[RMDB]
RNA sequence: GGGAACGACUCGAGUAGAGUCGAAAACGCGCUGGCCUGAAAGACCUGGGCGAACAGCUCAACAACGAACUGCUGGAAGACCACGGCAAGUUCGUACACGCCCCGGCGACUGUUACAAUCACCCCGCUAGACACAAGAUGUUCGCAUCUUGUGUCUAAAAAGAAACAACAACAACAAC
Reactivity to DMS in 0.01 (KOAc 150mM, MgCl2 10mM, bicine 150mM(pH8.5), 24C), signal-to-noise 3, nucleotides 027 to 126: c070g000c070g000c010u010g010g040c040c040u020g000a100a140a140g000a100c100c050u000g000g000g020c010g000a090a050c160a130g000c100u000c080a070a120c180a150a060c030g000a020a040c010u020g000c000u000g050g030a090a110g020a100c190c130a120c030g000g010c010a070a060g020u000u010c010g010u000a040c120a090c110g000c020c040c030c120g000g010c060g020a060c050u000g020u000u020a080c100a060a080u010c120a150c030c000c000c030g010c190
Reactivity to 2A3 in 0.01 (KOAc 150mM, MgCl2 10mM, bicine 150mM(pH8.5), 24C), signal-to-noise 2, nucleotides 027 to 126: c010g020c010g000c030u060g020g070c010c030u080g080a110a070a020g070a040c000c030u030g020g000g030c020g050a080a080c040a060g040c020u050c080a030a100c010a020a020c020g000a010a010c010u020g020c000u040g000g160a140a030g130a130c030c080a030c050g000g000c050a100a060g000u000u030c000g000u010a030c050a030c000g020c010c020c010c030g000g040c010g000a040c070u080g050u090u110a080c040a070a100u080c030a100c000c010c040c000g010c050